[RMDB]
RNA sequence: GGGAACGACUCGAGUAGAGUCGAAAAUUAUUACAAGGAAUUGGCUACAAGAUUGCAGCCGCUGGAUAAGCAAGUCUGAAAUUUGUAGGGUUGGCAGUCAAGAUGGGAAGCCCACAUCAAAGGCAGGUACGAAAGGAAUAUUCGUAUUCCUUUCGUAAAAAGAAACAACAACAACAAC
Reactivity to 2A3 in 0.01 (KOAc 150mM, MgCl2 10mM, bicine 150mM(pH8.5), 24C), signal-to-noise 3, nucleotides 027 to 126: u030u010a050u090u120a060c040a090a030g080g010a110a100u170u060g020g000c000u020a010c010a080a040g090a280u050u110g030c000a000g020c000c020g000c050u060g020g080a100u070a220a010g010c020a050a000g030u010c030u060g050a090a090a110u100u080u070g050u050a040g000g040g000u050u050g050g000c020a020g020u050c030a020a050g040a080u040g010g010g030a010a040g020c020c060c000a040c000a020u090c050a020a000a050g010g010c030a020g000g100
Reactivity to DMS in 0.01 (KOAc 150mM, MgCl2 10mM, bicine 150mM(pH8.5), 24C), signal-to-noise 9, nucleotides 027 to 126: u010u010a090u010u010a120c080a100a090g000g020a090a110u000u010g010g010c020u000a040c050a050a110g010a080u000u000g020c020a030g010c060c100g010c040u000g000g020a100u010a080a080g010c040a060a080g010u010c030u000g000a050a060a060u000u000u000g010u000a050g010g000g000u000u010g010g000c050a060g010u010c060a040a110g000a060u000g000g000g010a090a100g000c020c010c020a080c070a040u000c080a040a090a090g000g000c060a050g000g020

Chemical mapping of a 177-nucleotide RNA with 2A3 and DMS. The data come from the RNA Mapping Database (RMDB), library OK2TRN. The RNA was probed in 150 mM KOAc, 10 mM MgCl2 and 150 mM bicine (pH 8.5) at 24 C. For 2A3, 4,068 sequencing reads were counted.